[RMDB]
The data come from the RNA Mapping Database (RMDB), library M2RFPK. Structure probing data (DMS and 2A3) for a 207-nucleotide construct.

RNA sequence: GGGAACGACUCGAGUAGAGUCGAAAAGUGUAGCGUCACUUUGAUGGCGGUACUAUGAAUUGAUGCAAGGUGUGGAGCCACCUUAAACAGUUCUGGUGGUGCUCUGAAUGGAGUGCUCUACUGAGAUUUAACUUAUGCACGUUCGCGUGCAUAAGAAGCUUAACUAUUGCUUCGGCAAUAGUUAAGCAAAAGAAACAACAACAACAAC
Reactivity to DMS in 0.01 (KOAc 150mM, MgCl2 10mM, bicine 150mM(pH8.5), 24C), signal-to-noise 1, nucleotides 027 to 156: g060u010g000u000a040g010c030g030u010c010a050c000u000u010u010g000a140u000g000g000c050g020g000u000a040c030u000a070u000g060a080a110u000u000g020a160u000g000c140a030a030g020g000u010g030u000g010g010a190g000c000c010a030c000c000u000u000a100a090a180c030a060g000u010u000c050u000g000g020u020g010g000u000g010c000u000c010u000g000a170a160u000g000g000a070g040u010g030c050u010c020u000a060c030u000g020a080g010a190u000u010u000a100a150c010u000u000a000u000g010c000a010c010g030u000u000c280g040c020g020u000g000c000a020u000a000a000g030a070a110
Reactivity to 2A3 in 0.01 (KOAc 150mM, MgCl2 10mM, bicine 150mM(pH8.5), 24C), signal-to-noise 9, nucleotides 027 to 156: g100u060g010u030a040g070c020g040u070c010a020c050u190u130u220g190a270u060g050g000c010g030g080u030a030c020u050a060u180g040a050a050u070u070g080a100u080g110c050a030a020g020g000u040g010u080g070g040a020g020c010c000a010c000c000u010u020a040a090a020c020a030g020u040u020c020u060g020g010u030g020g110u020g000c020u010c020u090g130a100a090u240g030g000a010g010u020g010c010u000c010u040a050c040u100g040a010g050a210u070u160u170a070a010c000u000u000a000u000g000c000a000c010g000u030u030c100g030c010g060u000g000c000a000u000a000a000g000a010a010
For 2A3, 9,474 sequencing reads were counted.